[RMDB]
RNA sequence: GGGAACGACUCGAGUAGAGUCGAAAACGUCCACCACCGUCAGCGGGGAGGGCGAGCGCGGUGCCUCGGGGACCACCGUGAAGGUGGGCACACUGCAGAGAGAGAGCGCGGAGGAGCCGGUGAGGCCCAUUACUCUCUUGUUCGCAAGAGAGUAAUGAAAAGAAACAACAACAACAAC
Reactivity to 2A3 in 0.01 (KOAc 150mM, MgCl2 10mM, bicine 150mM(pH8.5), 24C), signal-to-noise 8, nucleotides 027 to 126: c010g020u000c000c010a040c020c020a230c020c010g110u160c100a070g160c070g020g000g010g020a080g010g010g020c020g010a040g030c060g000c020g030g090u110g030c000c020u040c030g010g010g010g030a030c000c010a010c000c000g040u090g240a150a050g010g000u010g000g000g010c020a020c000a010c040u130g010c100a030g020a000g000a000g000a000g010a010g100c030g000c040g030g010a050g010g010a030g020c020c030g010g080u150g040a050g020g010c000c010
Reactivity to DMS in 0.01 (KOAc 150mM, MgCl2 10mM, bicine 150mM(pH8.5), 24C), signal-to-noise 9, nucleotides 027 to 126: c070g020u000c010c010a180c030c020a120c040c020g010u010c180a140g020c050g020g010g000g010a090g020g010g000c030g000a070g020c050g020c030g010g020u000g010c050c010u000c050g010g000g000g000a160c040c010a010c000c010g010u010g010a110a170g010g020u000g000g000g010c090a080c080a130c060u000g000c080a080g010a100g000a130g000a120g000a130g010c040g010c050g000g000a100g010g010a120g010c030c020g000g020u000g000a170g010g000c020c050